[RMDB]
RNA sequence: GGGAACGACUCGAGUAGAGUCGAAAAUUGCACAUAUUCUCGCUGUUCUGAUUCUGUAAUAAUCAGGACAGGCUAAACAUUUGCUAUAUUAAGACCAUGCAUGUGUUCCCAGAUCUAGUUCUUGCCUCUGACUUGGGUCAUUCGUGACCCAAGUCAGAAAAGAAACAACAACAACAAC
Reactivity to 2A3 in 0.01 (KOAc 150mM, MgCl2 10mM, bicine 150mM(pH8.5), 24C), signal-to-noise 1, nucleotides 027 to 126: u180u080g060c000a080c010a090u130a010u000u000c010u030c000g040c010u000g000u000u000c000u000g000a000u000u000c000u000g150u130a210a180u090a100a000u070c000a090g000g000a000c080a020g000g000c000u010a060a110a000c040a090u000u300u000g000c000u220a100u060a000u080u150a090a000g000a060c160c000a070u120g000c050a000u100g000u000g000u020u020c000c000c000a040g120a120u090c040u040a000g100u040u040c000u070u000g010c000c140u000